Source: RMDB library 15KLIB, as collected in RNAgym. Chemical mapping of a 170-nucleotide RNA with DMS and 2A3.

RNA sequence: GGGAACGACUCGAGUAGAGUCGAAAAGUGAGUGGACACCCGCUUUAUUCACUGGGGACGACAACUCUGGGGAGAAAAGGGAGGAUCGGAUGGGAAGAGUAUAUCCUACGGGAAUCCGCGAUCCCCUACGGCAUCGACUUCGGUCGAUGCAAAAGAAACAACAACAACAAC
Reactivity to DMS in 0.01 (KOAc 150mM, MgCl2 10mM, bicine 150mM(pH8.5), 24C), signal-to-noise 5, nucleotides 027 to 129: g040u030g000a020g010u030g020g060a140c000a150c060c080c010g010c140u000u030u030a050u030u050c070a080c020u030g030g050g000g020a100c100g000a000c110a140a070c090u070c060u040g080g050g000g020a130g000a060a060a110a070g020g040g010a100g050g000a130u010c090g010g020a090u060g020g030g000a020a050g020a060g000u050a050u050a140u050c000c030u000a120c100g140g000g000a080a100u030c000c000g050c080g010a120u040c000c030c060c000u020a080c020g000
Reactivity to 2A3 in 0.01 (KOAc 150mM, MgCl2 10mM, bicine 150mM(pH8.5), 24C), signal-to-noise 2, nucleotides 027 to 129: g070u030g010a030g000u030g050g000a050c000a050c000c000c000g030c030u030u130u040a090u030u050c020a020c040u050g000g000g020g010a020c020g020a010c020a070a020c050u020c050u060g000g000g000g000a030g030a040a070a020a000g020g020g000a080g000g000a060u050c000g020g050a040u090g040g020g010a010a010g000a000g060u010a010u030a020u110c020c010u030a060c090g020g000g020a030a040u020c020c020g010c040g070a040u040c000c000c000c000u030a040c040g030